[RMDB]
RNA sequence: GGGAACGACUCGAGUAGAGUCGAAAACCACACUUCGGUGUGGGUCAUGGGGUCGCAGCUCGAUCAUCGAUCUAUGAACUACUCCUGAAGCCUCCACGGGAGCAUAGGGAGAUCGGUGCUGCGACGGAGGCACCCCUAGCAGAGAGUUCGCUCUCAAACCUAUAUCUCUCUUCGGAGAGAUAUAGGUAAAAGAAACAACAACAACAAC
Reactivity to 2A3 in 0.01 (KOAc 150mM, MgCl2 10mM, bicine 150mM(pH8.5), 24C), signal-to-noise 3, nucleotides 027 to 156: c010c000a000c000a000c010u080u130c300g140g000u000g000u010g000g020g030u140c100a180u120g000g020g000g000u000c000g000c010a000g000c000u010c010g030a020u010c010a020u300c060g050a030u000c020u020a000u020g010a070a070c050u200a070c000u300c010c000u030g010a050a020g010c000c000u000c000c000a000c020g000g000g000a000g030c000a000u000a010g000g030g020a100g010a010u000c000g000g030u100g030c000u000g000c000g000a000c010g000g000a000g000g000c000a020c000c000c000c000u030a080g020c170a030g000a000g000a010g020u150u110c190g080c110u020c030u020c000a000a100
Reactivity to DMS in 0.01 (KOAc 150mM, MgCl2 10mM, bicine 150mM(pH8.5), 24C), signal-to-noise 1, nucleotides 027 to 156: c000c000a040c000a040c010u010u000c180g060g010u000g090u000g000g020g000u000c040a030u000g010g010g000g020u000c000g000c010a070g000c020u000c000g010a060u000c000a140u010c250g020a060u000c040u010a030u030g010a140a130c080u010a300c010u010c010c000u010g000a010a040g020c010c000u010c010c040a300c100g000g000g000a060g000c000a000u000a080g040g000g000a050g050a040u000c030g050g000u000g000c040u000g000c020g000a000c010g050g000a060g040g030c000a010c000c000c000c020u000a200g010c200a130g010a080g000a060g000u000u000c060g020c090u000c010u000c010a020a140